[RMDB]
RNA sequence: GGGAACGACUCGAGUAGAGUCGAAAAGGUACGAUUCGUCGUACCAAAAAGCGUACUACCAGAGGAAUUGUCAGUCGUGGCUCUCCCAAAUAGGAGAGAAUCGACUUGGAUUUAUUCUACCCACCUGGUAUCGCAAAAAGGACUCUUCGGAGUCCAAUCAUAGGGUGUGGUUCGCCACACCCUAUGAAAAAGAAACAACAACAACAAC
Reactivity to 2A3 in 0.01 (KOAc 150mM, MgCl2 10mM, bicine 150mM(pH8.5), 24C), signal-to-noise 2, nucleotides 027 to 156: g010g000u010a000c010g010a020u070u250c250g040u040c000g060u090a020c000c040a020a000a000a000a030g020c030g010u030a070c020u000a000c020c000a000g000a020g060g000a000a000u050u000g050u040c010a010g000u010c000g100u130g120g040c010u000c000u080c000c020c000a120a280a140u180a100g000g000a010g000a000g000a000a040u060c000g000a010c030u010u070g050g020a000u140u180u160a020u040u060c020u070a140c000c020c040a080c050c000u000g000g050u010a030u300c000g000c010a000a060a000a120a000g000g000a000c000u000c030u020u110c290g080g000a000g010u000c010c000a000a020
Reactivity to DMS in 0.01 (KOAc 150mM, MgCl2 10mM, bicine 150mM(pH8.5), 24C), signal-to-noise 1, nucleotides 027 to 156: g010g040u000a030c030g030a020u000u010c210g020u010c000g130u020a020c010c000a030a000a030a110a140g000c030g010u020a070c200u000a030c000c000a040g010a170g000g010a010a060u000u000g030u000c020a030g020u080c000g020u000g030g020c010u000c040u000c000c000c030a080a090a280u000a050g020g030a030g000a040g000a030a110u010c000g000a040c000u000u010g020g020a040u000u000u020a000u010u000c000u000a070c050c020c000a300c220c000u000g000g030u000a010u020c050g000c020a010a050a100a120a160g000g010a010c000u000c000u000u010c230g100g010a040g040u000c000c000a000a090